[RMDB]
Structure probing data (DMS and 2A3) for a 177-nucleotide construct. The data come from the RNA Mapping Database (RMDB), library M2PK50. Values cover nucleotides 27 to 126. Conditions: 150 mM KOAc, 10 mM MgCl2 and 150 mM bicine (pH 8.5), 24 C.
RNA sequence: GGGAACGACUCGAGUAGAGUCGAAAAUCAUGGUGGUUCGCCACCAUGAACUGUCUAGUCGCUAGAAAACGAUCAUAACUAGCGACUAGACUAACGAUCGAACUGGGGGACAGUUCGCUGUCCCCAACAAUGAUACAACUUUCGAGUUGUAUCAUUGAAAAGAAACAACAACAACAAC
Reactivity to DMS in 0.01 (KOAc 150mM, MgCl2 10mM, bicine 150mM(pH8.5), 24C), signal-to-noise 9, nucleotides 027 to 126: u000c000a000u000g000g020u000g000g010u000u010c240g020c010c000a000c000c000a000u000g010a010a140c120u000g010u000c000u000a000g000u000c010g010c000u000a000g000a090a070a100a140c150g000a090u010c110a110u000a090a190c010u000a000g000c000g000a010c000u000a000g000a000c000u010a030a060c190g000a060u000c080g000a110a120c230u010g010g000g010g000g000a030c000a010g010u000u010c190g020c030u000g000u000c000c000c000c010a020a030
Reactivity to 2A3 in 0.01 (KOAc 150mM, MgCl2 10mM, bicine 150mM(pH8.5), 24C), signal-to-noise 9, nucleotides 027 to 126: u030c000a000u000g000g010u010g000g050u030u040c180g060c070c000a000c000c000a000u000g000a000a030c010u010g000u000c000u000a000g000u000c000g000c010u000a010g070a110a220a030a040c140g100a160u190c050a100u140a270a110c010u000a000g010c000g000a000c000u000a000g000a000c000u000a000a000c000g040a050u140c040g040a070a080c150u220g100g000g000g000g010a000c000a000g010u040u030c120g010c020u010g000u000c000c000c000c000a000a000